[RMDB]
RNA sequence: GGGAACGACUCGAGUAGAGUCGAAAAAUUAUUGCACAUCAAUUGAAAAUGAGCAGAACUAAGGAGACUAUCUGUAGUUUUGUGAUUCAUACCCUGUCACCAGAACCAAGAAGUCAAUCAGAGAAUACGGCUUUAUCUAAUUCGUUAGAUAAAGCCGAAAAGAAACAACAACAACAAC
Reactivity to 2A3 in 0.01 (KOAc 150mM, MgCl2 10mM, bicine 150mM(pH8.5), 24C), signal-to-noise 1, nucleotides 027 to 126: a000u120u120a040u100u160g050c010a010c000a090u130c040a090a260u050u280g090a150a000a000a000u070g030a030g000c000a000g000a050a010c090u010a010a100g100g000a080g160a160c050u090a230u070c010u120g080u050a120g000u000u060u000u060g010u010g040a030u130u130c010a010u170a190c020c000c000u030g000u040c040a030c010c030a030g000a030a040c030c000a070a090g030a040a000g080u090c100a080a090u120c080a000g070a000g090a300a040u050a140
Reactivity to DMS in 0.01 (KOAc 150mM, MgCl2 10mM, bicine 150mM(pH8.5), 24C), signal-to-noise 1, nucleotides 027 to 126: a100u050u010a040u000u020g040c110a140c100a100u000c080a070a110u000u000g000a070a030a110a040u020g060a120g010c010a010g000a030a030c070u000a070a080g010g000a130g010a060c240u000a110u000c000u010g000u000a010g000u000u000u020u020g040u000g000a080u000u000c050a090u040a120c060c070c020u000g000u000c040a000c040c070a050g040a060a040c030c080a150a060g010a050a030g000u000c030a070a110u000c050a040g000a130g020a140a040u000a130
The data come from the RNA Mapping Database (RMDB), library OK2TRN. The record gives the reactivity of an RNA of 177 nucleotides to 2A3 and DMS. 2A3 adducts were read by reverse transcription with SuperScript II with manganese. For DMS, 653 sequencing reads were counted. For 2A3, 539 sequencing reads were counted. The reactions ran in a buffer of 150 mM KOAc, 10 mM MgCl2 and 150 mM bicine (pH 8.5), at 24 C.